Source information
Conditions: 150 mM KOAc, 10 mM MgCl2 and 150 mM bicine (pH 8.5), 24 C. An RNA of 207 nucleotides, treated with 2A3 and DMS and read out base by base. The DMS profile rests on 2,162 reads. DMS adducts were read by reverse transcription with MarathonRT.
RNA sequence: GGGAACGACUCGAGUAGAGUCGAAAAGCCAUUGAGAAAUUGAUGCUUGAUGCACAUGCCAAGACACCUGAAGAAUUUCGUCUAGUAAUAGCCGAUGCACCGAAAUCAACGCUAACUACCAUCCACUCACAUUUAUGGUCACUAUUUAACCAAUAUCAAAGCUGGAAUUUUUCGAAAUUCCAGCUUUAAAAGAAACAACAACAACAAC
Reactivity to 2A3 in 0.01 (KOAc 150mM, MgCl2 10mM, bicine 150mM(pH8.5), 24C), signal-to-noise 2, nucleotides 027 to 156: g090c060c000a000u010u050g030a020g010a050a080a030u080u100g030a020u080g010c000u000u040g020a020u030g080c000a030c000a060u100g020c000c000a010a040g030a030c030a010c000c060u060g060a070a070g040a070a170u080u050u000c030g030u000c010u000a000g000u060a040a170u000a060g000c030c020g010a030u100g000c040a040c060c020g030a010a040a010u040c010a030a060c030g040c030u030a100a060c040u020a050c000c030a030u030c000c020a030c040u080c000a040c010a050u080u110u110a060u050g040g000u050c070a010c060u010a050u080u050u000a040a030c010c030a040a030u130a030u130c080
Reactivity to DMS in 0.01 (KOAc 150mM, MgCl2 10mM, bicine 150mM(pH8.5), 24C), signal-to-noise 2, nucleotides 027 to 156: g040c050c040a120u020u000g020a040g010a040a100a060u000u010g000a140u000g040c070u000u020g000a160u000g030c010a060c080a090u020g000c050c020a110a140g000a050c090a060c070c010u020g030a100a090g010a100a160u010u000u000c020g020u000c020u060a080g030u020a070a110u000a060g030c030c030g000a120u000g000c000a110c050c020g020a040a090a060u000c060a030a110c060g020c050u000a050a090c050u030a080c030c020a070u000c030c020a100c040u020c050a080c080a120u000u020u000a080u000g000g050u000c070a060c060u020a120u010u000u000a130a040c030c020a040a110u010a090u000c040